[RMDB]
This 170-nucleotide RNA was probed chemically with 2A3 and DMS.
RNA sequence: GGGAACGACUCGAGUAGAGUCGAAAACGGAUGCCCAGGUCGGACCGCGAGGAGGUGGAGAUGCCAUGCCGACCCGAAGAGGAAAGAAGGACGCGAGACGCAAACCUGUGAGUGGACACCCGCUUUAGUACAUCUAAGUUCGCUUAGAUGAAAAGAAACAACAACAACAAC
Reactivity to 2A3 in 0.01 (KOAc 150mM, MgCl2 10mM, bicine 150mM(pH8.5), 24C), signal-to-noise 9, nucleotides 027 to 129: c040g060g010a050u090g010c010c000c010a000g020g080u030c020g030g030a060c020c010g030c040g040a040g020g010a010g000g020u050g020g000a080g000a030u150g040c020c020a050u110g010c000c010g030a040c000c000c020g030a030a020g020a020g030g010a030a030a020g030a020a010g020g000a000c030g040c030g040a090g020a030c030g000c080a050a100a080c010c010u060g010u040g060a020g010u040g020g010a010c010a050c020c010c000g030c030u080u100u100a050g020u050a050
Reactivity to DMS in 0.01 (KOAc 150mM, MgCl2 10mM, bicine 150mM(pH8.5), 24C), signal-to-noise 9, nucleotides 027 to 129: c100g000g000a090u030g000c020c000c020a090g000g000u000c050g010g010a080c060c070g020c110g000a070g000g000a050g010g010u000g040g000a050g010a090u040g030c060c060a080u010g000c030c010g000a050c010c040c100g000a060a050g010a070g000g000a040a040a050g030a040a030g000g000a070c100g010c110g000a060g000a040c010g000c060a060a090a100c040c000u000g010u000g000a030g010u030g000g020a080c150a110c000c010c030g010c060u020u020u030a080g030u030a130
In probing experiments dimethyl sulfate is read out at A N1 and C N3, which are open when not base-paired.
Conditions: 150 mM KOAc, 10 mM MgCl2 and 150 mM bicine (pH 8.5), 24 C.
Reactivities are rounded to 0.1 and cut off at 0 and 3.
For 2A3 the reverse transcriptase was SuperScript II with manganese.